[RMDB]
RNA sequence: GGGAACGACUCGAGUAGAGUCGAAAAAUGUUGCGAGGAAUGUGAUGUACAACGAUGUGGUCACACAACAUGUACAGAGGCACAAGGGAUCUGGCGGGUGCAGACCUCUUCCAACUUUCCAGAUAGACCUUACGCCGCCAUUCGUGGCGGCGUAAGGAAAAGAAACAACAACAACAAC
Reactivity to 2A3 in 0.01 (KOAc 150mM, MgCl2 10mM, bicine 150mM(pH8.5), 24C), signal-to-noise 1, nucleotides 027 to 126: a000u060g000u000u120g030c220g000a010g000g120a220a070u060g000u070g000a070u000g000u040a000c030a220a070c150g010a030u050g000u000g050g120u130c100a020c000a000c000a300a040c000a000u030g090u000a000c000a050g080a220g140g000c000a000c000a000a030g070g000g000a000u010c000u020g010g050c050g030g120g060u270g050c000a000g000a000c000c010u000c000u070u000c030c000a010a000c000u030u000u040c000c000a000g110a150u080a010g070a000
The record gives the reactivity of an RNA of 177 nucleotides to 2A3. The reactions ran in a buffer of 150 mM KOAc, 10 mM MgCl2 and 150 mM bicine (pH 8.5), at 24 C. For 2A3, 591 sequencing reads were counted. 2A3 adducts were read by reverse transcription with SuperScript II with manganese.